[RMDB]
RNA sequence: GGGAACGACUCGAGUAGAGUCGAAAAUAAAAGGAGGAUGAGAAAUAUAGAGAGAUAUCGGUACUCCGACGCGCGUCUCUCAUUGAUAAGAGUGAUAAAAGGGUGAUUAUGUUAUAGCGCGCAAAAACCCUUGUAGGUAGUUCGCUACCUACAAGGGAAAAGAAACAACAACAACAAC
Reactivity to 2A3 in 0.01 (KOAc 150mM, MgCl2 10mM, bicine 150mM(pH8.5), 24C), signal-to-noise 2, nucleotides 027 to 126: u110a020a080a010a010g010g020a010g060g000a020u040g010a030g030a030a140a020u220a060u150a120g050a000g000a000g010a100u030a010u080c010g000g030u040a020c040u000c020c030g000a050c020g010c010g030c000g030u000c000u030c000u000c020a050u000u070g030a020u050a090a080g010a010g050u120g050a030u050a040a050a010a000g060g070g020u030g090a100u040u210a090u150g090u120u000a050u120a070g000c050g000c010g000c000a000a070a040a030a030
Reactivity to DMS in 0.01 (KOAc 150mM, MgCl2 10mM, bicine 150mM(pH8.5), 24C), signal-to-noise 2, nucleotides 027 to 126: u000a050a140a090a160g010g010a050g000g020a140u010g000a060g000a110a120a090u000a190u000a160g000a020g000a040g020a050u000a080u000c020g010g020u030a240c100u000c050c050g010a090c110g000c030g020c110g000u010c020u000c000u000c030a030u000u010g010a080u000a020a060g000a040g010u010g010a060u030a010a040a120a120g000g000g010u000g000a080u000u010a080u000g010u010u010a070u010a080g030c040g000c020g010c140a020a040a040a050a030